[RMDB]
RNA sequence: GGGAACGACUCGAGUAGAGUCGAAAAACUAGUAUGUACAGGGGUGAGUUGACCUGUCAUCUAGACUGCUGACCAUCAACUCACCGGUCAGGUGGAUGAUGUCCACAGAGUACGACAUCAGUACUCAGUGUAAGCAAGCGUUCGCGUUUGUUUACACAAAAGAAACAACAACAACAAC
Reactivity to DMS in 0.01 (KOAc 150mM, MgCl2 10mM, bicine 150mM(pH8.5), 24C), signal-to-noise 9, nucleotides 027 to 126: a130c030u000a050g010u030a030u010g000u030a030c050a070g000g010g010g020u010g010a040g020u000u000g000a040c100c110u010g000u000c010a010u000c030u010a070g010a170c140u010g010c070u010g000a030c030c300a280u010c030a020a020c030u000c020a020c040c040g010g000u010c040a050g000g000u000g000g000a020u010g010a090u070g010u000c000c010a020c040a100g010a030g000u000a010c000g000a140c190a110u040c160a080g000u000a020c010u000c010a140
Reactivity to 2A3 in 0.01 (KOAc 150mM, MgCl2 10mM, bicine 150mM(pH8.5), 24C), signal-to-noise 9, nucleotides 027 to 126: a000c020u030a020g110u130a090u140g100u100a030c030a040g110g040g040g050u090g050a090g040u050u050g060a050c020c050u020g010u000c000a000u000c010u020a050g120a250c090u080g020c010u020g020a010c010c010a020u040c010a020a040c020u020c040a030c010c020g010g030u030c030a030g020g030u000g010g010a030u090g020a040u150g100u020c010c000a020c020a020g010a000g000u010a000c040g080a030c080a180u160c070a040g010u000a010c000u000c030a020
Chemical mapping of a 177-nucleotide RNA with DMS and 2A3. High 2A3 reactivity points to a flexible backbone, as in loops and unpaired stretches. DMS (dimethyl sulfate) methylates the pairing face of unpaired adenines and cytosines.